[RMDB]
RNA sequence: GGGAACGACUCGAGUAGAGUCGAAAAGCAUCGACGACGGUCCUGCCAUGAGACCGUAACGCGGACAUGUCGCCUCGAAUGGCGUCGGGGAGCCGGCAGCUUACCCCAAGGAUGAGCGCCUAAUGCCUAUACCCGAUUCGCUUCGGCGAAUCGGGAACGGAAGUACAAUCUUCGGAUUGUACUUCCGAAAAGAAACAACAACAACAAC
Reactivity to 2A3 in 0.01 (KOAc 150mM, MgCl2 10mM, bicine 150mM(pH8.5), 24C), signal-to-noise 2, nucleotides 027 to 156: g040c020a060u090c060g200a150c010g010a000c000g030g020u010c000c000u110g150c110c020a240u200g040a080g020a130c000c000g000u020a080a010c040g010c010g010g030a030c030a070u070g000u030c030g000c030c010u030c090g080a130a070u120g030g030c020g010u030c020g030g000g000g000a010g060c090c030g070g000c050a020g020c000u020u170a300c000c000c010c070a030a040g100g020a120u130g070a040g030c010g020c000c010u110a150a030u120g000c020c010u060a060u090a160c000c000c000g000a000u000u010c000g000c000u020u020c220g130g000c000g000a000a000u010c000g000g000g010a000a000

Background:
Chemical mapping of a 207-nucleotide RNA with 2A3. Conditions: 150 mM KOAc, 10 mM MgCl2 and 150 mM bicine (pH 8.5), 24 C. The 2A3 profile rests on 892 reads.